This 207-nucleotide RNA was probed chemically with 2A3 and DMS. For DMS, 1,624 sequencing reads were counted. It was measured as part of the RMDB library OK3TST. The reactions ran in a buffer of 150 mM KOAc, 10 mM MgCl2 and 150 mM bicine (pH 8.5), at 24 C.
RNA sequence: GGGAACGACUCGAGUAGAGUCGAAAAGAGAUAGCACCUAGAAAGUGAGGAGCAACGUGACUCUCAUAGAGUAAGUAUUUCUAGCAUGUUUACUAUGAUCAUUAUUACCAUAGCCACACCCAUUUUAUAGAUGAGAAAACUGAGACUUAGAAAGGCACACCCAUAAUAGCUUCGGCUAUUAUGGGUGAAAAGAAACAACAACAACAAC
Reactivity to 2A3 in 0.01 (KOAc 150mM, MgCl2 10mM, bicine 150mM(pH8.5), 24C), signal-to-noise 2, nucleotides 027 to 156: g070a010g000a010u050a020g010c010a030c040c030u060a040g050a110a060a000g040u040g040a060g010g030a030g050c000a020a120c070g030u040g060a010c000u000c000u010c040a110u040a060g050a010g030u040a110a000g030u040a120u040u070u030c020u020a070g050c050a030u030g020u040u120u010a010c010u020a040u230g030a090u100c020a030u070u180a050u080u170a090c050c000a040u060a050g020c000c030a060c000a030c020c000c010a020u000u000u030u100a130u080a090g040a020u100g020a040g030a030a100a000a000c050u070g010a040g000a070c050u080u100a090g020a060a040a010g030g050c090a010
Reactivity to DMS in 0.01 (KOAc 150mM, MgCl2 10mM, bicine 150mM(pH8.5), 24C), signal-to-noise 1, nucleotides 027 to 156: g010a110g020a100u000a070g030c000a080c130c000u000a110g010a120a040a120g020u000g010a160g030g020a100g010c060a070a010c100g010u000g010a100c010u020c040u020c080a130u000a120g040a150g060u010a020a160g010u000a050u010u010u010c030u010a070g040c070a070u010g030u000u000u000a100c040u000a040u010g010a040u000c110a140u000u000a130u000u000a030c010c010a070u010a070g060c000c070a130c040a110c040c000c000a080u000u000u000u000a130u000a090g000a050u040g010a100g010a040a020a040a070c040u010g010a090g010a040c050u010u010a120g000a060a060a090g050g000c010a220